RNA sequence: GGGAACGACUCGAGUAGAGUCGAAAAAAGGUGGUGUUCGUAUGACUGGCGGUGGUUUUGGCGGCUGUAUUGUCGCGCUAAUGCCAAACUCACUCGUCGAGCAAGUUCGUGCGGCUGUAGCGCAGCAAAAGGCAAUCAGAUUCGUCUGAUUGCCUUUAAAAGAAACAACAACAACAAC
Reactivity to DMS in 0.01 (KOAc 150mM, MgCl2 10mM, bicine 150mM(pH8.5), 24C), signal-to-noise 5, nucleotides 027 to 126: a060a060g000g010u000g010g010u010g000u000u000c050g030u000a060u010g010a100c070u000g010g010c030g020g010u000g000g000u000u000u000u000g010g040c020g000g010c070u000g020u010a070u010u010g010u000c100g010c040g000c020u000a070a160u000g010c000c010a020a120a020c030u000c060a040c020u010c040g020u010c080g010a090g010c120a080a060g000u000u000c100g020u000g000c230g000g010c020u000g010u010a060g020c040g010c030a060g020c100a050
Reactivity to 2A3 in 0.01 (KOAc 150mM, MgCl2 10mM, bicine 150mM(pH8.5), 24C), signal-to-noise 2, nucleotides 027 to 126: a000a000g000g000u040g010g010u050g050u120u120c010g040u120a060u120g100a080c010u030g020g000c020g020g020u020g020g020u040u040u070u020g030g000c010g030g030c020u030g030u100a130u170u120g100u100c020g010c010g000c050u040a060a070u130g000c000c000a010a000a010c000u030c010a010c000u150c040g070u040c050g020a020g000c050a040a040g020u110u100c030g020u030g010c030g010g020c010u030g000u090a030g020c030g000c010a010g020c020a040